[RMDB]
RNA sequence: GGGAACGACUCGAGUAGAGUCGAAAAAUCUUUAAGCAGAUGGCAGGUUCACCCCGUACGGUGCGGAAGUUUGCGCUUCCGUGAAACGCGAAAAUCGGACGGUGGCUGCAAGUCGCAUCGCAAAACCUAUAGCUUGUUAGGUUCGCCUAACAAGCAAUCAUGUAAGAAGGUUCGCCUUCUUACAUGAAAAAGAAACAACAACAACAAC
Reactivity to 2A3 in 0.01 (KOAc 150mM, MgCl2 10mM, bicine 150mM(pH8.5), 24C), signal-to-noise 5, nucleotides 027 to 156: a010u050c040u040u140u070a100a030g010c050a040g020a060u040g080g000c030a020g020g050u110u110c000a030c010c000c000c000g020u010a020c040g020g030u050g020c000g000g020a020a020g030u070u130u160g080c120g010c030u000u000c000c000g000u020g050a110a110a010c120g010c030g090a040a030a010a100u100c010g000g020a010c050g030g030u070g040g000c040u040g020c020a010a030g060u060c030g010c050a020u040c010g020c040a030a070a050a110c020c030u110a070u070a140g000c000u010u000g000u010u000a000g010g020u010u030c120g040c030c000u000a000a000c000a000a000g000c000a000a000
Reactivity to DMS in 0.01 (KOAc 150mM, MgCl2 10mM, bicine 150mM(pH8.5), 24C), signal-to-noise 2, nucleotides 027 to 156: a060u000c010u000u000u010a100a100g030c070a090g000a070u000g010g020c040a100g010g010u000u020c080a070c010c010c020c040g030u000a020c020g010g050u010g000c010g000g020a050a040g030u000u000u010g010c300g010c000u000u000c000c040g020u010g000a050a090a090c110g000c070g030a090a060a100a100u000c030g000g000a060c060g020g010u000g000g000c060u000g000c040a050a060g000u000c040g000c020a040u000c030g020c070a080a050a080a090c040c020u000a130u000a150g000c000u000u010g020u010u000a010g010g020u000u000c300g020c020c000u000a030a010c000a010a010g010c010a010a010